Description:
The record gives the reactivity of an RNA of 177 nucleotides to 2A3 and DMS. For DMS, 2,057 sequencing reads were counted. The 2A3 profile rests on 2,001 reads. The reactions ran in a buffer of 150 mM KOAc, 10 mM MgCl2 and 150 mM bicine (pH 8.5), at 24 C. Values are in units of 0.01, from 0 to 300, in steps of 10.
RNA sequence: GGGAACGACUCGAGUAGAGUCGAAAAAUCGUCCAGCCGAAGUCUGCUGCACCACCUGGGGUGAGGAAGCCUGCCAGCAUUGCGACGACGCCGAUCUGGGUAAUCCAGAAACCAAAAGCGUUCAAACCGAUACUAGCUGUUUCGACAGCUAGUAUCGAAAAGAAACAACAACAACAAC
Reactivity to 2A3 in 0.01 (KOAc 150mM, MgCl2 10mM, bicine 150mM(pH8.5), 24C), signal-to-noise 2, nucleotides 027 to 126: a000u080c030g020u000c010c010a040g010c040c000g040a070a010g040u010c030u030g050c020u020g010c030a050c030c010a010c020c030u110g010g010g000g010u050g030a040g000g070a030a000g020c000c020u080g010c050c000a030g000c070a120u030u210g030c020g020a020c010g000a010c010g030c030c010g010a030u000c000u000g040g030g060u100a090a020u090c000c000a020g020a060a060a030c010c030a000a050a130a030g060c060g050u020u060c110a070a050a050c050
Reactivity to DMS in 0.01 (KOAc 150mM, MgCl2 10mM, bicine 150mM(pH8.5), 24C), signal-to-noise 3, nucleotides 027 to 126: a120u010c080g000u010c030c040a070g020c040c020g010a140a130g000u000c030u000g010c090u000g010c090a070c040c030a080c040c080u020g010g010g000g020u000g000a100g030g000a100a130g000c010c000u000g020c050c050a060g000c060a050u010u000g020c080g000a140c110g000a080c030g020c020c050g000a070u000c000u000g000g000g020u010a110a100u010c000c000a020g010a040a090a170c060c070a030a080a120a130g020c080g020u010u000c070a040a090a140c240